[RMDB]
Structure probing data (DMS and 2A3) for a 207-nucleotide construct. For DMS the reverse transcriptase was MarathonRT. For 2A3, 2,112 sequencing reads were counted. Conditions: 150 mM KOAc, 10 mM MgCl2 and 150 mM bicine (pH 8.5), 24 C. It was measured as part of the RMDB library M2RFOK. High 2A3 reactivity points to a flexible backbone, as in loops and unpaired stretches.
RNA sequence: GGGAACGACUCGAGUAGAGUCGAAAAACUGCAUCUACGGAUGCAGAACUACGUUCAUCCAAUUUAUUUGGACGCAUGAGAUGAGAAUAGGGAACGGGAUUCUCAUACGCAGGCUACGGCCUGCGAAAAAACUCCUUAUGCUUCGGCAUAAGGAGAAGAUAUUAUCCUGGUUCGCCAGGAUAAUAUCAAAAGAAACAACAACAACAAC
Reactivity to DMS in 0.01 (KOAc 150mM, MgCl2 10mM, bicine 150mM(pH8.5), 24C), signal-to-noise 1, nucleotides 027 to 156: a040c000u000g030c000a030u000c000u000a090c250g090g060a070u010g030c000a000g000a050a050c000u000a010c000g000u000u000c020a120u000c080c120a110a190u000u010u010a090u030u010u000g000g000a000c010g010c010a100u010g010a200g000a110u000g000a130g000a000a150u000a050g000g000g000a010a040c060g050g030g000a300u000u000c000u000c000a040u000a130c000g020c000a000g020g020c000u000a040c260g060g020c020c030u000g000c020g000a000a010a030a020a040a040c000u000c010c000u000u000a000u000g000c000u000u020c280g070g000c000a010u010a000a010g040g010a010g000a000a000
Reactivity to 2A3 in 0.01 (KOAc 150mM, MgCl2 10mM, bicine 150mM(pH8.5), 24C), signal-to-noise 3, nucleotides 027 to 156: a020c000u000g020c000a000u020c010u020a060c250g100g000a000u000g000c000a000g000a010a000c050u110a010c000g000u000u000c000a020u000c000c000a020a030u050u200u170a150u210u050u030g000g000a000c010g030c040a040u120g070a070g000a150u010g000a000g000a020a000u020a030g080g010g030a000a000c000g000g000g000a000u000u000c000u000c000a000u010a010c000g000c010a000g010g030c000u030a100c290g090g000c010c000u050g000c010g010a020a000a000a000a000a000c000u000c000c000u000u010a000u010g000c000u020u080c170g100g010c010a010u000a000a000g010g000a000g000a000a000